[RMDB]
RNA sequence: GGGAACGACUCGAGUAGAGUCGAAAAGUAUGGAUGCCACCGUGACGGCUCAAUCACACAAGUGCCAACGAUAACGAGGCGCUCGCUAUUGCUGCGUAACUGACGGCCUGACGGUCUGUCGUUACAAAAAACGAAAAGUGGUUCGCCACUUUUCGAAUCUAACCCCCUAGUUCGCUAGGGGGUUAGAAAAAGAAACAACAACAACAAC
Reactivity to 2A3 in 0.01 (KOAc 150mM, MgCl2 10mM, bicine 150mM(pH8.5), 24C), signal-to-noise 1, nucleotides 027 to 156: g030u070a070u260g020g070a030u040g060c010c010a080c090c040g080u100g090a040c070g010g050c030u020c050a040a150u180c030a020c010a000c000a070a040g010u010g050c010c000a110a070c140g080a180u070a180a070c110g020a060g080g000c040g000c010u030c020g000c030u010a060u160u200g070c070u080g010c040g010u000a010a090c040u190g000a000c000g010g000c000c050u220g120a080c160g030g020u000c010u100g010u000c000g010u010u020a020c000a010a010a010a010a010a010c000g000a000a000a000a000g000u000g000g000u010u030c090g080c010c000a000c000u000u000u000u010c000g010a040a040
Background
An RNA of 207 nucleotides, treated with 2A3 and read out base by base.